[RMDB]
RNA sequence: GGGAACGACUCGAGUAGAGUCGAAAAUCACGCCAGUUCGCUGGCGUGAAAAGGUCAAGACAAAAGUCUAAAGCCAAAAGGGAAAACCCAGACCAUUGGCAAAAAGCGGUACCUUCGGGUACCGCAAGAGGGUAUAUAUCUUCGGAUAUAUACCCUCAAAAGAAACAACAACAACAAC
Reactivity to 2A3 in 0.01 (KOAc 150mM, MgCl2 10mM, bicine 150mM(pH8.5), 24C), signal-to-noise 2, nucleotides 027 to 126: u030c000a000c000g010c010c000a010g020u060u040c180g060c070u010g000g000c010g020u000g010a000a000a010a000g040g010u100c040a020a050g020a020c030a020a300a020a100g010u000c030u100a160a030a010g010c000c000a010a010a030a020g010g010g020a020a100a010a060c000c010c030a020g040a020c000c010a020u000u030g000g000c010a020a040a020a020a040g000c000g000g000u000a000c010c010u050u100c190g120g010g000u000a000c000c000g010c010a010a000
Reactivity to DMS in 0.01 (KOAc 150mM, MgCl2 10mM, bicine 150mM(pH8.5), 24C), signal-to-noise 2, nucleotides 027 to 126: u000c000a000c010g000c000c000a000g000u000u000c220g020c000u010g000g000c000g030u000g000a000a030a120a070g000g000u010c130a110a050g030a020c000a120a110a080a110g020u000c000u010a120a060a090g000c000c010a010a050a080a120g010g010g020a090a110a150a220c010c010c010a060g000a090c000c000a200u000u000g010g020c020a120a060a060a150a100g020c010g010g000u000a000c000c000u000u010c190g030g030g010u000a000c010c000g000c010a000a050
Chemical mapping of a 177-nucleotide RNA with 2A3 and DMS. For 2A3, 3,317 sequencing reads were counted. 2A3 adducts were read by reverse transcription with SuperScript II with manganese.